[RMDB]
This 177-nucleotide RNA was probed chemically with DMS and 2A3. 2A3 adducts were read by reverse transcription with SuperScript II with manganese. The RNA was probed in 150 mM KOAc, 10 mM MgCl2 and 150 mM bicine (pH 8.5) at 24 C.
RNA sequence: GGGAACGACUCGAGUAGAGUCGAAAAUCCGGCAAGGUGAGCCAGCGGCCCUUGCCGUGGAAGUCGCGGAUGGUCUGGCGGCCGAACACCAGCGGACGCGAGGCGUCGAGCUUCGACUGCAAGGUGAUACUACCUAAUAGUUCGCUAUUAGGUAGUAAAAAGAAACAACAACAACAAC
Reactivity to DMS in 0.01 (KOAc 150mM, MgCl2 10mM, bicine 150mM(pH8.5), 24C), signal-to-noise 9, nucleotides 027 to 126: u000c020c010g010g020c040a040a050g010g010u010g010a100g010c040c040a110g020c110g010g010c070c010c000u000u000g000c000c050g010u000g000g010a040a030g000u000c040g010c030g000g010a040u010g020g020u000c010u000g000g010c010g000g010c010c010g000a070a100c110a090c170c160a120g000c010g000g000a030c030g010c010g010a020g010g010c010g000u000c040g000a300g000c010u000u000c010g000a050c010u000g010c010a040a030g000g010u000g000a190
Reactivity to 2A3 in 0.01 (KOAc 150mM, MgCl2 10mM, bicine 150mM(pH8.5), 24C), signal-to-noise 9, nucleotides 027 to 126: u020c010c000g010g030c050a060a040g080g070u120g040a030g040c030c020a050g060c070g070g030c010c000c000u000u010g000c000c000g000u020g020g020a050a010g020u080c100g020c090g300g020a040u110g180g020u030c020u020g170g000c000g000g010c010c000g020a110a040c050a060c080c020a010g070c010g000g010a010c020g000c020g100a010g000g010c010g010u050c040g020a010g000c000u020u020c010g120a010c000u010g000c020a040a040g000g000u030g020a020

For DMS, 97,603 sequencing reads were counted.